[RMDB]
RNA sequence: GGGAACGACUCGAGUAGAGUCGAAAAGUGGAGUUGGGUACGAGGAUGGUAUUGGAGAUAUCAAUUUGUCCGAUCUAUUACCGAGUCUGCCGAUGUUGGACGUGAAGUGGUUUAAAGACGGUGGAAUCUUAACAAAACCAGCAUUGUUCCAGAUGCCCAUGGCAUAUCGUUUCGACGAUAUGCCAUGAAAAGAAACAACAACAACAAC
Reactivity to 2A3 in 0.01 (KOAc 150mM, MgCl2 10mM, bicine 150mM(pH8.5), 24C), signal-to-noise 4, nucleotides 027 to 156: g040u040g010g030a040g010u090u040g010g000g000u060a050c060g020a050g020g000a010u060g010g050u110a100u050u090g060g000a040g040a070u090a040u120c100a130a130u050u050u150g120u060c080c050g030a080u000c010u070a080u050u110a080c010c020g010a030g060u010c010u040g010c010c020g010a020u090g030u090u040g020g030a010c020g000u020g040a060a040g040u080g070g000u020u060u080a040a080a000g030a020c020g030g030u030g040g010a040a030u060c020u040u040a060a030c040a020a050a020a060c010c010a000g050c010a030u000u120g030u090u030c050c020a010g010a060u060g050c020c010
Reactivity to DMS in 0.01 (KOAc 150mM, MgCl2 10mM, bicine 150mM(pH8.5), 24C), signal-to-noise 3, nucleotides 027 to 156: g020u000g030g020a090g000u000u000g000g010g030u000a060c070g010a120g010g030a140u000g000g040u010a050u000u000g020g020a120g010a130u000a100u010c060a070a180u000u000u000g010u010c060c020g010a160u000c050u000a070u000u010a050c060c020g010a190g000u010c010u000g020c050c060g000a100u000g010u000u000g020g010a070c070g020u000g000a070a070g030u000g000g010u000u000u000a080a030a090g030a040c050g020g030u000g000g020a070a080u000c060u010u000a070a090c090a040a020a070a070c010c020a040g020c020a130u010u000g000u000u000c050c030a140g010a090u010g010c080c090
Chemical mapping of a 207-nucleotide RNA with 2A3 and DMS. The data come from the RNA Mapping Database (RMDB), library OK3TST. For DMS the reverse transcriptase was MarathonRT.